[RMDB]
Description:
The record gives the reactivity of an RNA of 177 nucleotides to DMS and 2A3. For 2A3 the reverse transcriptase was SuperScript II with manganese.
RNA sequence: GGGAACGACUCGAGUAGAGUCGAAAAAGGCGGAUCUGAGCAUUGAGGAGGGCGAGCUGGUGCUGAACAACAUCCGCUUCUACGACGAGGCAGCUCUCGCGAAGGACACCAGCGCCGAGGCGGAGGCAGCAGGCGUAAAUUUCGAUUUACGCCUGCUAAAAGAAACAACAACAACAAC
Reactivity to DMS in 0.01 (KOAc 150mM, MgCl2 10mM, bicine 150mM(pH8.5), 24C), signal-to-noise 2, nucleotides 027 to 126: a060g000g000c040g020g010a030u030c010u000g000a080g040c060a120u030u020g000a120g030g020a070g000g000g000c030g030a130g010c040u020g000g000u000g010c060u030g000a100a070c080a080a160c300a090u000c040c000g000c000u010u000c020u000a120c140g060a080c090g010a040g000g020c100a100g000c040u010c030u040c040g010c170g000a110a100g000g010a160c030a050c000c020a000g050c060g020c030c010g000a080g000g000c010g000g020a140g040g000c140
Reactivity to 2A3 in 0.01 (KOAc 150mM, MgCl2 10mM, bicine 150mM(pH8.5), 24C), signal-to-noise 2, nucleotides 027 to 126: a000g060g010c010g020g000a020u000c050u200g070a020g000c010a030u040u070g080a080g050g020a040g000g000g000c010g020a010g030c000u050g000g030u000g000c000u060g130a110a010c000a000a000c010a130u020c010c010g020c000u060u040c040u110a090c000g120a080c020g040a050g000g020c100a110g010c090u000c020u000c120g000c030g030a100a040g010g010a010c010a040c070c020a000g030c000g000c060c000g010a010g000g000c000g070g040a020g000g040c020
For DMS the reverse transcriptase was MarathonRT.
The RNA was probed in 150 mM KOAc, 10 mM MgCl2 and 150 mM bicine (pH 8.5) at 24 C.